[RMDB]
RNA sequence: GGGAACGACUCGAGUAGAGUCGAAAAAUACGUGUAGAGUAAUUGUUAGUGAUAACUCGUAUCGGAAAAUAGGGAAAGGUUAUAGAAGGAUGGAGUUUCUAUAAAGCAUUUACCCUAUCUGUUAUCAAAAAAGCACCGUAUUCGUACGGUGCUUUUUAAAAGAAACAACAACAACAAC
Reactivity to DMS in 0.01 (KOAc 150mM, MgCl2 10mM, bicine 150mM(pH8.5), 24C), signal-to-noise 1, nucleotides 027 to 126: a040u010a020c010g010u000g000u030a120g040a070g020u050a060a110u000u000g020u020u010a150g050u030g010a000u000a050a060c000u010c040g000u000a110u030c190g000g000a050a060a090a060u000a000g000g020g000a030a040a060g030g020u010u000a000u000a000g000a020a000g030g000a190u000g030g010a160g010u030u010u000c000u000a010u000a000a100a000g040c040a120u000u000u000a080c000c040c000u000a000u000c040u010g020u010u000a050u010c030a000